[RMDB]
RNA sequence: GGGAACGACUCGAGUAGAGUCGAAAAGAUAUGGAACGCGCGGUUCAGCUUGGAUUUAGGGACUGAUACGGAUCGGAAACGAUCCGUGUUUGGUCCCUUGUCAGCUGAACUGAGCGUUCCUAAGUCAAACGAUCGGCUUGUUCGCAAGCCGAUCGAAGUAGAUACACGCGUUCGCGCGUGUAUCUACAAAAGAAACAACAACAACAAC
Reactivity to 2A3 in 0.01 (KOAc 150mM, MgCl2 10mM, bicine 150mM(pH8.5), 24C), signal-to-noise 1, nucleotides 027 to 156: g010a000u010a030u100g000g000a010a000c000g010c000g010c020g020g050u000u000c000a000g010c010u140u240g110g030a100u300u250u160a040g000g000g000a000c000u010g000a020u010a010c000g010g000a000u010c010g010g060a130a100a030c020g010a000u050c050c010g020u070g010u000u070u260g040g000u000c000c000c010u000u000g000u000c000a000g000c000u000g000a000a000c000u000g000a000g000c000g000u000u000c000c010u000a010a000g010u010c010a030a020a050c020g000a010u000c010g000g000c010u000u020g030u110u080c240g000c120a000a000g000c000c000g000a000u000c000g000a010a000